[RMDB]
RNA sequence: GGGAACGACUCGAGUAGAGUCGAAAAAGACGGAAAGCCAUCGACUGUCACCAGAUGCUGCAUCACCUGAUCACUGAUGGCUCAACGGUAUCCGGCGGUACAACUGAAUACUUGUAGCUGCCUUUUGAAAAGGAGUUCAUCUUCGGAUGAACUCCAACCGAGUGCGUAAGUUCGCUUACGCACUCGGAAAAGAAACAACAACAACAAC
Reactivity to 2A3 in 0.01 (KOAc 150mM, MgCl2 10mM, bicine 150mM(pH8.5), 24C), signal-to-noise 1, nucleotides 027 to 156: a000g050a000c050g000g000a130a000a000g010c010c000a020u020c070g040a030c030u080g010u120c030a020c010c000a090g030a070u100g000c170u170g060c070a010u100c020a040c070c000u090g010a110u090c000a060c120u200g000a010u010g000g000c000u010c030a000a010c000g000g040u080a050u110c060c000g000g000c020g010g000u030a000c000a070a000c020u170g090a220a050u040a120c040u030u030g010u010a040g140c000u000g080c030c000u110u180u050u180g040a170a050a040a040g010g000a000g000u010u000c000a000u000c010u050u080c160g030g000a000u000g000a000a000c000u000c000c000a000a000
Source information
Chemical mapping of a 207-nucleotide RNA with 2A3. For 2A3, 440 sequencing reads were counted. For 2A3 the reverse transcriptase was SuperScript II with manganese. The RNA was probed in 150 mM KOAc, 10 mM MgCl2 and 150 mM bicine (pH 8.5) at 24 C.